[RMDB]
RNA sequence: GGGAACGACUCGAGUAGAGUCGAAAAGCAUCAGGCGCGUUCCAGCUUGCGAUCACGGGGAUCUCUACACGCAAGCAAGUAUAGCCAUCAGCACUUAAAGUAGGCCGCCGGGGACACUCACCUUAGCCAGUAAUUUAACAUUCGUGUUAAAUUACUGAAAAGAAACAACAACAACAAC
Reactivity to 2A3 in 0.01 (KOAc 150mM, MgCl2 10mM, bicine 150mM(pH8.5), 24C), signal-to-noise 9, nucleotides 027 to 126: g030c010a060u080c060a040g060g010c020g000c030g080u060u030c010c000a010g000c010u010u020g010c010g090a110u090c060a060c140g020g010g010g060a090u060c060u000c020u110a050c040a010c060g010c020a010a010g000c010a010a010g050u080a060u090a100g020c020c010a050u060c040a040g020c030a030c050u070u150a100a040a050g040u050a080g050g030c020c010g000c010c010g000g010g010g010a010c010a010c040u040c010a080c010c010u050u060a030g060c020
Reactivity to DMS in 0.01 (KOAc 150mM, MgCl2 10mM, bicine 150mM(pH8.5), 24C), signal-to-noise 9, nucleotides 027 to 126: g010c050a070u010c080a070g010g010c020g010c040g010u010u010c020c030a130g010c010u000u000g010c010g000a080u010c120a120c170g000g000g000g010a100u020c060u010c030u010a120c160a110c030g010c030a020a040g000c020a060a070g020u010a060u010a110g010c020c020a060u020c070a080g010c040a050c060u000u010a050a070a110g010u000a080g010g000c030c030g010c030c030g000g010g000g000a070c060a040c040u000c050a070c040c030u000u000a100g010c140

Structure probing data (2A3 and DMS) for a 177-nucleotide construct.
The reactions ran in a buffer of 150 mM KOAc, 10 mM MgCl2 and 150 mM bicine (pH 8.5), at 24 C.